[RMDB]
RNA sequence: GGGAACGACUCGAGUAGAGUCGAAAAACAAAGAGGUUUGCCAGUCAAAGUAAAAGAGCUGCCAUUAAGAAAUGUAUUUCAUUUUGACAGCUUCUUCGAUCAAUACCGCCAGCUCCCUCGAGCCAAAGCGGAUUAUAGCGUUCGCGCUAUAAUCCGCAAAAGAAACAACAACAACAAC
Reactivity to 2A3 in 0.01 (KOAc 150mM, MgCl2 10mM, bicine 150mM(pH8.5), 24C), signal-to-noise 1, nucleotides 027 to 126: a000c120a000a150a020g160a050g100g040u080u090u140g080c020c000a010g000u100c020a010a210a040g050u050a110a050a140a000g010a000g000c000u000g030c000c000a000u110u090a040a110g050a080a020a020u100g010u080a300u080u200u050c030a030u000u010u020u000g000a000c000a000g000c000u180u100c000u020u020c030g150a140u090c040a000a080u130a180c000c050g000c020c010a020g000c000u000c050c000c090u030c000g100a050g060c080c060a000a120a000